This 177-nucleotide RNA was probed chemically with 2A3 and DMS. 2A3 adducts were read by reverse transcription with SuperScript II with manganese. Conditions: 150 mM KOAc, 10 mM MgCl2 and 150 mM bicine (pH 8.5), 24 C. 2A3 is a SHAPE reagent: it acylates the 2'-hydroxyl of flexible nucleotides of all four kinds. DMS adducts were read by reverse transcription with MarathonRT. The data come from the RNA Mapping Database (RMDB), library OK2TST.
[RMDB]
RNA sequence: GGGAACGACUCGAGUAGAGUCGAAAAGAAACAUGGUGUGUUGGCAUCUUACAGAAACUCUUACAGCGACUUUGCUGUUGGUUUUGGUAACGACACCACUGAUGCUCAACUCACUUCGCUAAUGUUAAUAAUUUAGAAUUUUCGAAUUCUAAAUUAUAAAAGAAACAACAACAACAAC
Reactivity to 2A3 in 0.01 (KOAc 150mM, MgCl2 10mM, bicine 150mM(pH8.5), 24C), signal-to-noise 2, nucleotides 027 to 126: g120a060a110a000c010a040u090g020g000u020g000u000g000u010u000g030g000c000a000u000c010u070u110a070c020a060g100a020a030a000c040u090c070u220u110a000c010a010g000c010g190a250c180u160u240u300g000c010u000g000u000u030g000g000u010u000u030u110g000g000u020a140a060c110g050a070c090a010c130c010a030c050u020g000a010u010g000c010u030c220a000a020c010u010c010a020c000u050u040c010g000c060u190a030a040u190g050u140u120a080
Reactivity to DMS in 0.01 (KOAc 150mM, MgCl2 10mM, bicine 150mM(pH8.5), 24C), signal-to-noise 3, nucleotides 027 to 126: g010a200a070a040c060a030u000g000g010u000g000u000g000u000u000g020g000c010a020u010c000u020u010a070c300a250g020a020a030a010c030u010c170u000u010a020c010a000g000c010g000a080c300u020u020u000g020c000u000g010u000u010g000g000u010u000u020u000g020g010u000a060a090c220g000a080c220a050c050c020a160c160u000g000a010u000g000c010u020c000a020a040c020u000c020a020c010u000u000c160g000c140u000a090a060u010g000u000u000a110